[RMDB]
RNA sequence: GGGAACGACUCGAGUAGAGUCGAAAAGAUAUGGAAACUGACUGCGCCGUUAGCCAUAUGAGGGUCGUCGGAAACGACGACCUACCCACCAUAUGGCUAACGGAACUACGCACCAGUUUCCUAAGUCCAACAGAAGAAACUUCGGUUUCUUCUGUUGAAAAGAAACAACAACAACAAC
Reactivity to DMS in 0.01 (KOAc 150mM, MgCl2 10mM, bicine 150mM(pH8.5), 24C), signal-to-noise 3, nucleotides 027 to 126: g000a110u010a300u030g000g000a040a040a000c000u000g020a120c280u000g010c040g010c000c000g010u000u000a010g000c010c000a010u000a010u000g020a130g030g000g000u010c000g000u010c000g000g000a090a110a260c010g000a010c000g020a010c000c000u020a000c050c060c130a300c090c010a020u000a000u000g000g000c000u000a000a000c030g000g000a000a020c110u030a300c020g000c010a000c060c020a050g020u000u000u000c010c000u010a000a040g000u000c040